[RMDB]
RNA sequence: GGGAACGACUCGAGUAGAGUCGAAAACAGCAUCGUCAAGGCGUUCCAUCGCAUGAUGCUUUCGGUCGCGAAGGGGUAGCCAUGUCUUCCGAUGCCUUGCAAAGCACAUUGAAGAUCGCGGCAUCGACCGCAUAAUGCUAUUCGUAGCAUUAUGCGGAAAAGAAACAACAACAACAAC
Reactivity to 2A3 in 0.01 (KOAc 150mM, MgCl2 10mM, bicine 150mM(pH8.5), 24C), signal-to-noise 6, nucleotides 027 to 126: c030a010g030c010a040u040c020g170u120c080a090a090g100g000c020g020u140u130c040c030a080u180c020g000c020a030u120g010a020u020g050c000u020u040u040c050g020g020u030c030g000c020g040a080a030g020g020g010g020u060a040g030c030c030a030u100g030u000c020u050u020c020c020g070a080u020g010c010c020u060u140g020c070a100a040a020g040c030a030c030a120u080u200g050a050a020g030a050u100c050g010c020g030g000c010a050u050c030g050a040
Reactivity to DMS in 0.01 (KOAc 150mM, MgCl2 10mM, bicine 150mM(pH8.5), 24C), signal-to-noise 6, nucleotides 027 to 126: c170a070g000c030a040u000c050g040u010c090a170a110g010g000c020g010u000u000c070c070a100u010c050g020c040a080u010g010a040u000g000c020u000u000u010c050g010g010u000c060g010c050g020a090a080g030g010g010g020u010a100g040c080c100a070u010g010u000c030u000u000c080c080g000a060u000g010c050c020u000u000g010c140a090a100a090g000c060a070c110a110u000u000g000a050a070g000a060u000c080g010c100g000g010c020a080u000c070g010a220
Chemical mapping of a 177-nucleotide RNA with 2A3 and DMS. For DMS, 6,794 sequencing reads were counted. It was measured as part of the RMDB library OK2TST. For DMS the reverse transcriptase was MarathonRT.